[RMDB]
RNA sequence: GGGAACGACUCGAGUAGAGUCGAAAAGAUAUGGAUGGUCUAGGAUGACUUGGACCUAUUAUCGGAAACGAUAAUAGCUAGUCACUAGAGCCAUCCUAAGUCAAAACGUCGCACUUCGGUGCGACGAGUUGGAGGAAUACUUCGGUAUUCCUCCAACAAAAGAAACAACAACAACAAC
Reactivity to 2A3 in 0.01 (KOAc 150mM, MgCl2 10mM, bicine 150mM(pH8.5), 24C), signal-to-noise 3, nucleotides 027 to 126: g030a030u040a010u070g000g020a010u010g020g000u000c000u010a010g090g080a300u300g020a080c010u190u300g030g030a030c010c000u000a020u000u000a000u000c000g000g000a030a030a020c000g000a000u000a010a000u000a010g000c020u020a000g010u000c010a020c300u000a000g020a050g050c000c000a000u000c000c000u010a010a000g030u010c010a000a030a130a170c010g010u000c010g010c020a020c000u050u090c300g160g010u000g000c000g010a000c000g000a030
Reactivity to DMS in 0.01 (KOAc 150mM, MgCl2 10mM, bicine 150mM(pH8.5), 24C), signal-to-noise 2, nucleotides 027 to 126: g010a020u000a120u010g010g000a000u010g000g030u000c000u000a020g000g020a300u010g010a020c010u020u010g010g000a020c300c000u010a010u000u000a000u000c000g000g010a050a020a060c000g000a010u000a010a000u000a000g000c040u000a010g010u010c020a210c010u000a020g000a120g000c000c000a010u000c000c000u000a000a130g000u010c000a130a100a140a260c020g000u010c010g010c000a000c010u000u010c180g010g020u000g000c010g000a000c020g000a020
An RNA of 177 nucleotides, treated with 2A3 and DMS and read out base by base. It was measured as part of the RMDB library TTRDES. 2A3 adducts were read by reverse transcription with SuperScript II with manganese.